[RMDB]
RNA sequence: GGGAACGACUCGAGUAGAGUCGAAAAUGAUCGAGAGAUCUAACGAUGUACGCGAGUCAAAGGCACAGACUCGAGCGAAAGCUCGGUCGAAAGACCGCGUACAUCGGUCGGCAAGUGUAGAGUCAAAACUGGUCAUUAGUUUCGACUAAUGACCAGUAAAAGAAACAACAACAACAAC
Reactivity to 2A3 in 0.01 (KOAc 150mM, MgCl2 10mM, bicine 150mM(pH8.5), 24C), signal-to-noise 1, nucleotides 027 to 126: u120g000a010u010c020g020a020g010a000g000a100u020c000u000a100a050c010g010a010u020g020u000a000c010g000c020g020a110g040u010c070a060a060a060g210g050c060a050c020a140g000a010c030u070c150g010a000g000c010g060a090a040a020g000c000u010c010g020g020u000c000g010a000a010a000g010a010c000c000g010c000g000u010a000c010a000u010c000g010g010u020c010g000g000c020a190a070g000u050g090u150a040g010a020g030u000c070a000a030a000
Reactivity to DMS in 0.01 (KOAc 150mM, MgCl2 10mM, bicine 150mM(pH8.5), 24C), signal-to-noise 4, nucleotides 027 to 126: u000g010a030u010c000g010a250g000a250g010a000u000c000u010a110a130c020g000a030u010g000u000a000c010g010c000g010a090g010u000c010a040a080a120g030g030c210a120c210a180g000a010c000u010c010g000a000g000c010g010a160a060a160g010c000u000c010g000g000u000c000g000a070a070a160g000a000c010c000g000c010g000u000a010c030a000u000c000g020g000u010c030g000g010c040a040a100g000u000g000u000a150g000a050g010u000c020a070a050a070
This 177-nucleotide RNA was probed chemically with 2A3 and DMS. The 2A3 profile rests on 2,246 reads. The data come from the RNA Mapping Database (RMDB), library OK2TRN. 2A3 is a SHAPE reagent: it acylates the 2'-hydroxyl of flexible nucleotides of all four kinds. The reactions ran in a buffer of 150 mM KOAc, 10 mM MgCl2 and 150 mM bicine (pH 8.5), at 24 C. Values cover nucleotides 27 to 126.